[RMDB]
RNA sequence: GGGAACGACUCGAGUAGAGUCGAAAACAUACUUACCGUGGAUUAACUAACUUAAUUCUCACAAAACCUUUAUAAUGAGGUUAGCACUGUGAAUAGCACCAUUUUGAAGAUUAAGGAAACUGAGGCAUGAUAUCACAGAUUGGUAAGUGGCCUCCAACGGUAGGCCACGUUUCGACGUGGCCUACCGAAAAGAAACAACAACAACAAC
Reactivity to 2A3 in 0.01 (KOAc 150mM, MgCl2 10mM, bicine 150mM(pH8.5), 24C), signal-to-noise 3, nucleotides 027 to 156: c000a050u180a020c010u040u010a010c010c010g030u040g000g040a100u030u040a080a000c070u040a050a020c020u060u010a020a020u130u020c040u020c060a140c030a120a150a030a120c020c020u080u100u080a230u130a190a110u150g020a000g000g000u000u020a020g000c050a010c080u030g000u010g040a050a040u060a080g090c020a070c060c030a090u060u070u040u150g130a080a030g050a070u090u110a090a030g130g000a050a060a020c080u060g020a070g070g000c010a040u110g050a110u160a010u070c000a020c000a020g050a090u090u120g000g000u010a030a020g010u030g000g050c010c000u030c000c020a070a010
Reactivity to DMS in 0.01 (KOAc 150mM, MgCl2 10mM, bicine 150mM(pH8.5), 24C), signal-to-noise 1, nucleotides 027 to 156: c030a140u030a150c010u000u010a000c020c020g000u000g050g020a180u000u010a030a200c080u000a130a090c240u000u000a040a030u020u000c040u000c030a050c050a130a170a070a030c010c000u020u000u000a150u000a110a090u000g030a020g010g000u000u000a050g030c070a130c050u000g100u010g010a070a070u000a090g000c020a050c010c080a160u000u000u000u000g030a050a170g030a100u000u040a020a190g000g000a040a010a070c070u030g010a030g020g010c000a050u010g030a080u000a000u000c030a030c090a090g010a150u000u020g030g010u000a000a090g030u010g000g000c090c010u000c030c050a020a150
Conditions: 150 mM KOAc, 10 mM MgCl2 and 150 mM bicine (pH 8.5), 24 C. Chemical mapping of a 207-nucleotide RNA with 2A3 and DMS. Values cover nucleotides 27 to 156. For DMS the reverse transcriptase was MarathonRT. For 2A3, 1,229 sequencing reads were counted.